The record gives the reactivity of an RNA of 177 nucleotides to 2A3 and DMS. DMS adducts were read by reverse transcription with MarathonRT.
RNA sequence: GGGAACGACUCGAGUAGAGUCGAAAAUUUAAUGGCUACAUACGGCACUCAGUUUACACUUACAUUACAUAUGCAUUUUAACACAUCAACUAUAACACCUUUAUUUAAGUCUGUUGUGGACCAUAGACUAGUCUUGUAGGUUCGCCUACAAGACUAGAAAAGAAACAACAACAACAAC
Reactivity to 2A3 in 0.01 (KOAc 150mM, MgCl2 10mM, bicine 150mM(pH8.5), 24C), signal-to-noise 2, nucleotides 027 to 126: u090u100u040a110a040u060g040g000c000u040a000c030a050u030a040c020g030g000c030a010c040u060c020a030g040u050u070u050a040c070a000c020u070u080a010c020a140u020u100a020c010a040u180a030u130g030c070a120u030u070u030u180a070a020c030a020c000a040u070c000a000a040c010u020a010u040a190a010c010a080c030c050u020u150u020a140u030u190u040a110a020g010u080c060u090g040u030u020g000u040g000g020a030c010c030a030u000a080g070a040
Reactivity to DMS in 0.01 (KOAc 150mM, MgCl2 10mM, bicine 150mM(pH8.5), 24C), signal-to-noise 2, nucleotides 027 to 126: u020u010u000a090a110u000g010g000c030u010a040c060a020u010a070c120g010g010c030a070c040u010c040a080g020u000u010u000a070c150a080c090u000u010a070c050a040u000u010a060c140a050u010a050u000g000c090a030u000u010u000u000a060a080c060a080c120a040u000c080a020a050c030u000a030u000a040a070c070a050c120c040u010u020u000a090u020u000u000a020a050g000u010c080u000g010u020u000g030u000g000g010a190c110c060a050u000a090g020a170